The record gives the reactivity of an RNA of 177 nucleotides to 2A3 and DMS.
High 2A3 reactivity points to a flexible backbone, as in loops and unpaired stretches.
RNA sequence: GGGAACGACUCGAGUAGAGUCGAAAACCCAAAGCGUUCGCGCUUUGGGAAAGAAUAAACGAGCGAAAAGAAUGAUGUGCACGCUCGUAAAAACCACAUCAAAAAGUCAACGGUUCGCCGUUGACAACUACAUUAUUCGCUUCGGCGAAUAAUGUAGAAAAGAAACAACAACAACAAC
Reactivity to 2A3 in 0.01 (KOAc 150mM, MgCl2 10mM, bicine 150mM(pH8.5), 24C), signal-to-noise 2, nucleotides 027 to 126: c000c000c010a000a000a000g000c010g010u050u110c190g010c000g010c070u000u010u000g000g010g000a030a110a010g050a030a050u230a150a150a010c000g000a000g010c030g070a150a060a070a100g110a040a150u160g020a030u060g020u020g020c060a010c080g000c000u000c000g000u000a000a000a000a050a020c030c000a010c000a020u050c020a020a050a070a040a000g000u010c000a010a010c010g000g010u020u070c230g040c060c010g000u000u000g000a000c000a000a000
Reactivity to DMS in 0.01 (KOAc 150mM, MgCl2 10mM, bicine 150mM(pH8.5), 24C), signal-to-noise 1, nucleotides 027 to 126: c000c000c000a000a020a000g010c000g000u000u010c230g050c010g000c000u000u000u000g020g000g000a040a020a050g000a200a070u000a110a130a110c000g020a000g000c010g010a060a070a130a110g000a220a050u020g000a010u000g030u000g020c090a090c000g030c000u000c010g000u020a000a020a060a030a050c120c020a020c010a000u020c000a080a060a100a050a080g000u000c010a020a000c000g030g000u000u000c270g020c000c000g010u000u010g050a000c020a010a050
For DMS, 1,027 sequencing reads were counted. The 2A3 profile rests on 3,012 reads. Source: RMDB library M2PK50, as collected in RNAgym.